[RMDB]
RNA sequence: GGGAACGACUCGAGUAGAGUCGAAAAGCACUAGAGGGCGUAACGGCUGGGUGUAACCCAACUCUAGGUGUGCAGAUUAGCGGGCUUGACUCCGUAACAAAUAGGCACUGGUGGUAAAAAGCAUCCCUGACCAUAUACAUCUUCGGAUGUAUAUGAACUAACUAGUAGCCUUCGGGCUACUAGUUAGAAAAGAAACAACAACAACAAC
Reactivity to 2A3 in 0.01 (KOAc 150mM, MgCl2 10mM, bicine 150mM(pH8.5), 24C), signal-to-noise 2, nucleotides 027 to 156: g010c000a010c020u030a010g010a010g020g010g000c010g040u070a090a040c030g120g000c000u020g000g010g010u070g050u050a090a090c000c000c000a020a030c000u010c010u020a040g010g130u030g020u030g040c010a000g020a180u070u100a030g030c020g000g010g030c110u110u120g020a080c070u040c030c020g020u040a020a010c010a020a060a030u130a070g040g000c010a010c030u040g110g000u030g000g030u080a040a090a040a010a020g030c020a040u020c000c010c000u000g040a020c020c030a000u000a000u000a010c000a000u000c010u000u070c230g110g010a000u000g000u000a000u000a000u000g000a010a010
Reactivity to DMS in 0.01 (KOAc 150mM, MgCl2 10mM, bicine 150mM(pH8.5), 24C), signal-to-noise 2, nucleotides 027 to 156: g010c010a050c010u000a060g010a070g020g020g000c020g050u000a110a110c220g010g010c000u000g010g020g010u000g020u000a060a300c040c000c000a030a050c010u000c050u000a060g030g040u000g020u000g020c030a040g000a140u010u000a120g000c020g020g020g080c000u000u010g000a110c070u000c030c030g010u000a030a130c050a080a070a100u000a070g000g000c030a030c050u000g000g000u000g070g000u020a070a100a080a050a100g010c050a070u000c000c020c010u000g010a120c090c010a000u000a000u000a000c000a010u000c010u000u010c300g030g000a020u000g010u000a000u000a010u000g000a030a140